[RMDB]
The record gives the reactivity of an RNA of 177 nucleotides to 2A3 and DMS. The DMS profile rests on 4,171 reads. The 2A3 profile rests on 7,998 reads. It was measured as part of the RMDB library M2PK50.
RNA sequence: GGGAACGACUCGAGUAGAGUCGAAAACUAUGCAGAUUCGUCUGCAUAGAGACCCGAUGAAGCGCCACUUACACAGCUUCAUACACGUAAGAAGUGCAAUAAAGGGACGAGGGUUCGCCCUCGUCAACAUCAGUGUCCAUUUCGAUGGACACUGAUGAAAAGAAACAACAACAACAAC
Reactivity to 2A3 in 0.01 (KOAc 150mM, MgCl2 10mM, bicine 150mM(pH8.5), 24C), signal-to-noise 6, nucleotides 027 to 126: c000u010a010u000g010c000a000g010a030u030u090c100g140u020c090u000g000c000a000u000a000g000a010g010a030c010c000c000g020a040u050g010a020a020g000c040g040c110c080a150c080u130u210a070c170a010c040a110g020c010u010u000c000a000u040a010c060a000c040g050u060a050a040g080a180a030g120u040g050c060a060a120u200a280a110a050g210g030g000a000c000g000a000g030g010g030u040u040c200g100c010c000c000u000c000g000u000c000a000a000
Reactivity to DMS in 0.01 (KOAc 150mM, MgCl2 10mM, bicine 150mM(pH8.5), 24C), signal-to-noise 5, nucleotides 027 to 126: c000u000a000u000g000c000a000g000a050u000u010c220g030u000c000u030g000c000a010u000a000g000a120g010a170c010c000c000g000a050u010g000a030a040g010c020g000c140c120a100c120u010u000a100c150a090c160a200g000c020u000u010c060a030u000a160c050a050c070g000u010a100a060g030a170a080g000u000g000c190a070a090u020a040a070a110g020g010g000a000c010g010a020g000g010g020u000u020c260g010c000c000c000u000c000g000u000c010a050a070